Chemical mapping of a 207-nucleotide RNA with DMS and 2A3.
Source: RMDB library ARCHII, as collected in RNAgym.

[RMDB]
RNA sequence: GGGAACGACUCGAGUAGAGUCGAAAACGCCCUCGGCCCGGACCCUGGCAUCAGCUAGAGGGAUCCACCGAUGAGUCCGGUCGCGGGACUCCUCGGGACAACCACAGCGACUGGGAUCGUCAUCUCGGCUAGUUCGCGUGACCGGGAGAUCCGAGCAGUUAUGAAUAGUGUUCGCACUAUUCAUAACAAAAGAAACAACAACAACAAC
Reactivity to DMS in 0.01 (KOAc 150mM, MgCl2 10mM, bicine 150mM(pH8.5), 24C), signal-to-noise 1, nucleotides 027 to 156: c110g010c030c010c020u000c020g000g000c000c030c020g000g010a190c040c000c000u000g010g010c040a110u010c080a110g010c020u000a070g030a170g000g010g010a050u000c050c030a110c050c000g010a000u000g010a090g000u010c030c020g060g030u000c080g020c040g000g010g010a080c030u000c010c060u020c030g020g000g030a080c090a090a110c050c030a240c070a180g000c080g040a040c000u000g010g010g000a020u010c060g000u000c080a240u000c020u010c010g000g000c020u000a150g030u020u000c090g030c080g010u010g000a140c020c020g020g000g020a060g000a110u000c010c000g010a040g000c030a220
Reactivity to 2A3 in 0.01 (KOAc 150mM, MgCl2 10mM, bicine 150mM(pH8.5), 24C), signal-to-noise 5, nucleotides 027 to 156: c070g060c010c020c000u030c040g090g000c020c030c030g040g010a030c020c010c020u020g040g000c010a060u060c040a160g010c030u090a050g030a090g100g020g020a060u050c040c040a050c040c000g000a010u020g000a000g020u020c020c010g050g000u050c020g030c040g030g000g030a030c000u000c010c000u040c040g060g010g020a050c060a070a080c060c030a030c040a070g030c020g020a010c030u040g020g000g030a070u050c020g100u080c070a130u000c020u010c000g070g050c020u020a040g070u110u110c130g000c060g170u050g090a230c000c000g020g010g010a040g000a010u000c010c000g000a020g000c050a030

For DMS, 3,033 sequencing reads were counted.
The RNA was probed in 150 mM KOAc, 10 mM MgCl2 and 150 mM bicine (pH 8.5) at 24 C.